[RMDB]
RNA sequence: GGGAACGACUCGAGUAGAGUCGAAAACCCAGACUGGAACUCUCCAGGAGGUUUUUGGCUGGGGAACAGAAGGGAGAGCAGGAGGUCCCAAGGUAAUGAAAUGAAGGAGGGAGUUACAACCUUCAGCUACCUAUUAGUCAUUCGUGACUAAUAGGUAAAAAGAAACAACAACAACAAC
Reactivity to DMS in 0.01 (KOAc 150mM, MgCl2 10mM, bicine 150mM(pH8.5), 24C), signal-to-noise 7, nucleotides 027 to 126: c010c010c020a110g010a190c040u000g010g000a090a110c080u010c070u000c040c070a080g010g010a140g000g000u000u010u010u000u000g010g010c030u000g010g010g010g000a070a060c090a080g010a110a100g010g010g000a070g000a080g020c060a050g010g010a090g000g000u000c020c020c030a070a080g000g020u000a050a070u000g010a100a090a090u010g010a050a040g010g010a110g010g010g010a120g010u000u010a060c120a090a120c030c020u000u000c030a060g000c160
Reactivity to 2A3 in 0.01 (KOAc 150mM, MgCl2 10mM, bicine 150mM(pH8.5), 24C), signal-to-noise 3, nucleotides 027 to 126: c010c000c000a000g110a040c020u020g040g050a070a090c050u070c020u030c180c030a070g040g040a040g070g050u020u090u030u210u210g060g000c010u030g000g000g000g060a050a020c010a050g070a050a040g030g020g000a090g010a010g000c020a020g000g050a000g000g040u020c000c000c020a020a010g070g010u090a080a080u170g060a090a060a110u080g030a050a020g000g010a010g000g020g010a060g040u060u050a040c030a060a030c030c000u040u020c010a010g020c010